[RMDB]
RNA sequence: GGGAACGACUCGAGUAGAGUCGAAAAGGCGGCAGUGCUGCGGCGGCGAGGUGACGCUGCUGCUCGAGCCGCUGCGGACCGCGUUCCCAGUGGUCGCGCUGUUCGGCAUCGGGCACGUGGGGCUGGACUCUGUAGGGUAUUUCGAUACCCUACAGAGAAAAGAAACAACAACAACAAC
Reactivity to DMS in 0.01 (KOAc 150mM, MgCl2 10mM, bicine 150mM(pH8.5), 24C), signal-to-noise 4, nucleotides 027 to 126: g010g010c020g000g010c040a120g010u010g010c050u000g010c000g000g010c010g000g000c020g010a150g020g010u010g010a110c030g000c020u000g000c040u000g000c000u000c020g000a170g000c000c000g020c030u000g010c040g000g000a090c010c010g010c010g000u000u000c000c000c000a200g010u000g000g020u000c010g020c030g030c090u000g000u020u000c020g010g000c050a090u000c060g000g000g000c040a050c080g020u000g010g000g010g000c030u000g010g000a300
Reactivity to 2A3 in 0.01 (KOAc 150mM, MgCl2 10mM, bicine 150mM(pH8.5), 24C), signal-to-noise 4, nucleotides 027 to 126: g040g010c010g020g000c030a040g030u050g080c040u020g000c010g020g010c010g000g020c040g050a110g070g200u190g030a040c010g010c020u020g010c000u020g010c000u010c020g010a030g000c000c020g000c010u000g000c020g040g020a040c000c010g000c020g030u050u010c020c000c020a020g020u050g060g020u020c030g000c010g000c220u090g060u130u130c030g030g000c070a170u100c030g020g030g010c030a010c050g030u050g000g020g010g010c010u020g010g020a030